An RNA of 177 nucleotides, treated with 2A3 and DMS and read out base by base. The RNA was probed in 150 mM KOAc, 10 mM MgCl2 and 150 mM bicine (pH 8.5) at 24 C. High DMS reactivity at an A or C suggests that its Watson-Crick edge is free.
RNA sequence: GGGAACGACUCGAGUAGAGUCGAAAAUCUUCGGUACCCAGUUGACGCUGCCCCCAGAAGGUCGGUUCGGUUCGGUGGCAUCGGUGCAGCGUUAUGUGGACGACGUGCUUGCGCUACCGGCGGUAGGGCCAAGCAUGUGCUUCGGCACAUGCUUGGCAAAAGAAACAACAACAACAAC
Reactivity to 2A3 in 0.01 (KOAc 150mM, MgCl2 10mM, bicine 150mM(pH8.5), 24C), signal-to-noise 3, nucleotides 027 to 126: u020c000u040u070c050g040g040u080a080c010c000c000a090g080u080u180g020a010c000g020c010u020g000c000c000c000c000c000a030g060a130a050g100g090u060c050g040g040u050u070c030g040g070u140u070c020g040g070u020g010g010c030a040u090c050g050g010u040g000c040a040g000c040g010u040u010a090u110g140u080g070g020a010c020g010a010c020g050u100g040c010u090u080g030c030g000c020u020a090c030c000g040g000c020g000g030u120a110g070g060
Reactivity to DMS in 0.01 (KOAc 150mM, MgCl2 10mM, bicine 150mM(pH8.5), 24C), signal-to-noise 2, nucleotides 027 to 126: u010c040u000u020c080g010g020u130a090c010c000c000a050g020u040u030g020a060c110g040c090u000g000c020c000c010c000c040a130g000a080a080g000g020u000c020g000g030u000u000c060g030g000u010u000c040g000g040u010g000g000c050a040u000c190g000g020u010g040c010a060g050c020g050u000u020a060u020g030u070g020g000a090c050g000a160c050g010u010g000c020u010u030g000c230g000c000u000a020c000c030g000g020c050g000g020u010a070g000g000